An RNA of 177 nucleotides, treated with DMS and read out base by base.
RNA sequence: GGGAACGACUCGAGUAGAGUCGAAAAGAUAUGGAAUAUCGCAACAAGUUAGUUUCCGAUAAGCGUGGGUCGGAAACGACCCAACGCUUUUGACGGAAAUCUAACUUGUUGCGAUAUUCCUAAGUCACAGGUUGUAAAAGUUCGCUUUUACAACCUGAAAAGAAACAACAACAACAAC
Reactivity to DMS in 0.01 (KOAc 150mM, MgCl2 10mM, bicine 150mM(pH8.5), 24C), signal-to-noise 2, nucleotides 027 to 126: g030a060u000a300u000g000g020a020a030u010a010u000c000g000c000a010a010c010a000a000g010u000u000a010g020u000u010u000c000c000g030a190u000a040a000g020c030g050u000g010g040g050u000c000g000g010a130a110a170c020g000a020c000c000c010a040a060c010g020c000u010u000u000u010g020a300c140g000g000a020a000a010u010c030u000a010a010c000u000u000g010u000u000g000c000g000a010u000a000u000u000c000c000u020a020a050g000u010c050a250